This 177-nucleotide RNA was probed chemically with DMS and 2A3. For DMS the reverse transcriptase was MarathonRT. The DMS profile rests on 5,544 reads. For 2A3, 2,253 sequencing reads were counted. Conditions: 150 mM KOAc, 10 mM MgCl2 and 150 mM bicine (pH 8.5), 24 C. It was measured as part of the RMDB library OK2TST.
[RMDB]
RNA sequence: GGGAACGACUCGAGUAGAGUCGAAAAGUGCAAGAAGACACUGGGAGCGAGCGCUGGAUCGCUGAUCCAUGUCAUCUGGAUGGAGGAGGGCCCCGAGGCCGCGCGUGCGUUCCUGUCGCAGAGCCAGUAAAUCAGCUUCAUUCGUGAAGCUGAUUUAAAAAGAAACAACAACAACAAC
Reactivity to DMS in 0.01 (KOAc 150mM, MgCl2 10mM, bicine 150mM(pH8.5), 24C), signal-to-noise 4, nucleotides 027 to 126: g010u000g000c040a110a060g020a110a100g000a070c050a040c140u010g000g010g010a060g010c020g010a100g000c070g010c100u000g010g000a130u000c010g000c040u010g000a080u010c020c010a040u000g010u000c060a080u010c100u000g020g010a080u000g010g000a080g010g020a120g020g000g000c010c040c080c080g010a100g000g010c040c020g000c300g000c050g000u010g010c040g020u000u000c010c020u000g000u000c040g020c070a080g000a170g010c020c010a090g010
Reactivity to 2A3 in 0.01 (KOAc 150mM, MgCl2 10mM, bicine 150mM(pH8.5), 24C), signal-to-noise 2, nucleotides 027 to 126: g070u050g000c050a040a070g030a080a010g020a130c020a020c090u050g010g040g000a060g010c020g010a000g040c030g000c110u080g000g010a030u030c010g020c150u050g030a030u020c010c010a020u040g090u050c020a100u050c050u100g030g070a080u080g000g040a070g040g040a070g000g050g000c010c020c010c030g060a140g030g040c030c030g020c020g000c010g030u110g020c020g050u060u040c010c030u050g050u070c020g010c030a020g000a010g050c010c010a010g020